[RMDB]
RNA sequence: GGGAACGACUCGAGUAGAGUCGAAAAUCGCUAAGCUUCGGCUUAGCGAAAAGUCGCGGCUUGAGGGCGUGUAGGGCUGCGCACACACACGACCCUCAAGCCAAAGCAUCGUGUUCGCACGAUGCAACUCCCAUAGUACGUUCGCGUACUAUGGGAGAAAAGAAACAACAACAACAAC
Reactivity to 2A3 in 0.01 (KOAc 150mM, MgCl2 10mM, bicine 150mM(pH8.5), 24C), signal-to-noise 1, nucleotides 027 to 126: u010c010g020c010u010a000a010g010c000u030u170c290g070g030c000u010u010a000g010c000g010a000a010a000a010g050u080c020g000c050g100g000c000u000u000g000a000g000g000g000c010g000u000g000u080a180g080g050g000c140u300g090c210g000c080a020c000a000c000a000c000a000c030g300a300c000c000c000u000c000a000a000g000c000c000a010a010a000g000c000a000u000c010g010u010g050u030u050c210g030c090a000c010g000a000u010g050c010a010a040